Chemical mapping of a 177-nucleotide RNA with DMS and 2A3. For 2A3 the reverse transcriptase was SuperScript II with manganese. Source: RMDB library OK2TRN, as collected in RNAgym. For DMS, 3,124 sequencing reads were counted.

[RMDB]
RNA sequence: GGGAACGACUCGAGUAGAGUCGAAAAUUUUCCAGAGCCGACGCGAAUAUUGCCCACAACCUGCCAUUCGAUAAGUUCAUGCUGACCUGCGAUCUGGCUCGCGGCAAGUUCGGCCUGGACGAAGUCAGAAUAAGUGAGCUUUCGAGCUCACUUAUUCAAAAGAAACAACAACAACAAC
Reactivity to DMS in 0.01 (KOAc 150mM, MgCl2 10mM, bicine 150mM(pH8.5), 24C), signal-to-noise 4, nucleotides 027 to 126: u010u000u000u000c000c010a040g000a200g010c000c010g020a020c080g010c140g020a120a150u010a120u010u010g010c010c000c100a150c150a080a200c100c070u000g000c020c020a060u010u010c030g010a100u020a060a050g000u000u000c050a100u020g020c150u010g000a020c050c030u000g010c020g010a020u000c180u000g000g020c020u010c060g000c110g000g000c060a030a050g000u000u000c020g010g010c000c020u010g020g010a020c210g000a050a090g010u020c120a120
Reactivity to 2A3 in 0.01 (KOAc 150mM, MgCl2 10mM, bicine 150mM(pH8.5), 24C), signal-to-noise 2, nucleotides 027 to 126: u030u010u030u000c010c020a020g010a050g000c020c000g000a020c020g040c050g120a080a020u200a060u150u110g010c010c010c010a080c050a090a090c030c040u040g020c000c000a040u010u010c000g030a050u070a220a050g000u050u040c020a030u290g090c100u080g040a030c010c000u020g000c000g020a040u010c090u100g040g000c020u040c050g000c060g010g000c050a100a000g010u050u020c010g000g000c000c000u010g000g000a010c010g030a050a050g070u140c110a070
Conditions: 150 mM KOAc, 10 mM MgCl2 and 150 mM bicine (pH 8.5), 24 C.
For DMS the reverse transcriptase was MarathonRT.